[RMDB]
RNA sequence: GGGAACGACUCGAGUAGAGUCGAAAAGGAACUGCCGCGCGGGGCGGCGCCAUUUGUGCCGCAACACGGUGGGCGUCGGCGUGAAUCGCGAAGGCGCGUUCGCCGAGUACCUCGCGAUUCCCGCGUAAAUUUAGUCGCUGUUCGCAGCGACUAAAUUAAAAGAAACAACAACAACAAC
Reactivity to 2A3 in 0.01 (KOAc 150mM, MgCl2 10mM, bicine 150mM(pH8.5), 24C), signal-to-noise 1, nucleotides 027 to 126: g090g010a090a060c070u080g000c030c010g050c010g030c090g040g010g060g000c010g000g040c000g000c040c010a120u090u110u300g070u070g000c040c010g050c020a040a000c040a020c010g080g000u090g020g080g000c000g090u130c010g090g020c010g030u100g080a010a040u040c010g030c000g070a100a080g030g000c020g010c040g130u100u140c110g010c060c000g000a010g030u050a140c040c000u000c040g000c010g000a010u020u040c060c010c000g000c030g010u130a080
Reactivity to DMS in 0.01 (KOAc 150mM, MgCl2 10mM, bicine 150mM(pH8.5), 24C), signal-to-noise 2, nucleotides 027 to 126: g010g020a120a060c060u010g030c010c030g000c010g020c050g050g010g000g010c000g010g020c000g020c020c300a130u000u020u010g030u000g030c000c020g020c060a110a090c040a070c020g000g030u000g020g010g000c010g020u000c010g010g010c000g010u010g010a030a030u010c000g010c000g000a080a040g010g020c020g000c090g000u010u010c080g010c130c030g020a120g020u000a100c040c020u000c010g010c000g000a020u000u000c000c030c010g010c010g000u010a040